[RMDB]
RNA sequence: GGGAACGACUCGAGUAGAGUCGAAAAUUGGAACCUCUGGCAGAGGGUUAAUAAGAGGCAACCCAGCUCAUGGAUUUAGAAACUGAUCUGAAUGGGGCUCAAUCUUUGUCUUUUGUAUGCCCCUAAGUCCAAUCUGACUAUUCGUAGUCAGAUUGGAAAAAGAAACAACAACAACAAC
Reactivity to 2A3 in 0.01 (KOAc 150mM, MgCl2 10mM, bicine 150mM(pH8.5), 24C), signal-to-noise 1, nucleotides 027 to 126: u110u040g180g000a050a050c050c020u020c100u130g020g010c040a010g100a020g240g060g000u040u040a050a020u050a050a030g020a020g090g000c020a030a000c020c010c000a020g020c040u020c030a020u170g140g020a040u070u030u150a090g050a030a120a050c080u040g060a180u050c020u060g050a080a090u040g000g020g020g000c060u100c040a060a050u000c000u050u080u040g080u020c000u000u130u030u000g080u070a050u130g080c000c000c000c020u010a000a000g010
Reactivity to DMS in 0.01 (KOAc 150mM, MgCl2 10mM, bicine 150mM(pH8.5), 24C), signal-to-noise 3, nucleotides 027 to 126: u000u000g010g010a160a100c040c010u000c020u010g020g000c070a100g010a050g000g010g000u010u010a060a080u010a070a100g000a040g010g000c040a080a080c090c030c050a100g010c050u010c040a080u020g010g000a040u000u010u010a060g010a090a080a130c210u000g000a050u010c050u010g010a060a070u000g020g020g010g010c000u000c060a040a060u010c120u000u010u000g010u000c070u000u010u000u010g010u010a090u000g020c040c000c020c020u010a020a070g010

Structure probing data (2A3 and DMS) for a 177-nucleotide construct. As a SHAPE reagent, 2A3 marks flexible, mostly unpaired nucleotides at the ribose 2'-OH. It was measured as part of the RMDB library OK2TRN. The reactions ran in a buffer of 150 mM KOAc, 10 mM MgCl2 and 150 mM bicine (pH 8.5), at 24 C. 2A3 adducts were read by reverse transcription with SuperScript II with manganese.